Conditions: 150 mM KOAc, 10 mM MgCl2 and 150 mM bicine (pH 8.5), 24 C. The record gives the reactivity of an RNA of 177 nucleotides to 2A3 and DMS. 2A3 adducts were read by reverse transcription with SuperScript II with manganese. For 2A3, 2,831 sequencing reads were counted. The DMS profile rests on 2,808 reads.

RNA sequence: GGGAACGACUCGAGUAGAGUCGAAAAGAAAUAAGCUAUGGAAUGUAAGGCGAAAUCGCUGUGAGUGUGAAAAGCAGCGUAAAUUGCCAAAGAGACACGCACACAGACAAAACAUAGCGAUAAGAAAGGGUUAUCAUAUGUUCGCAUAUGAUAACCCAAAAGAAACAACAACAACAAC
Reactivity to 2A3 in 0.01 (KOAc 150mM, MgCl2 10mM, bicine 150mM(pH8.5), 24C), signal-to-noise 2, nucleotides 027 to 126: g070a010a070a030u170a040a000g010c000u000a010u010g000g040a190a020u090g020u150a060a160g020g010c020g040a010a090a010u100c000g000c050u000g010u000g010a060g100u210g000u100g120a040a030a070a050g000c000a000g010c000g020u070a000a070a040u040u010g000c000c000a010a160a000g070a000g000a040c040a030c120g120c030a030c000a000c010a080g060a000c030a040a070a030a000c000a000u000a000g010c040g050a000u050a080a030g140a050a030a020
Reactivity to DMS in 0.01 (KOAc 150mM, MgCl2 10mM, bicine 150mM(pH8.5), 24C), signal-to-noise 3, nucleotides 027 to 126: g000a090a160a070u020a140a270g000c000u020a000u020g000g000a120a200u010g010u020a060a130g000g040c000g000a040a000a110u050c060g010c000u020g000u020g010a180g010u020g000u000g080a140a060a190a210g000c080a000g060c010g000u000a070a090a140u010u060g020c000c020a090a120a090g040a200g000a140c040a040c000g030c030a040c090a050c060a140g000a030c120a000a070a140a210c000a000u000a000g000c000g000a120u000a020a090g000a060a180a080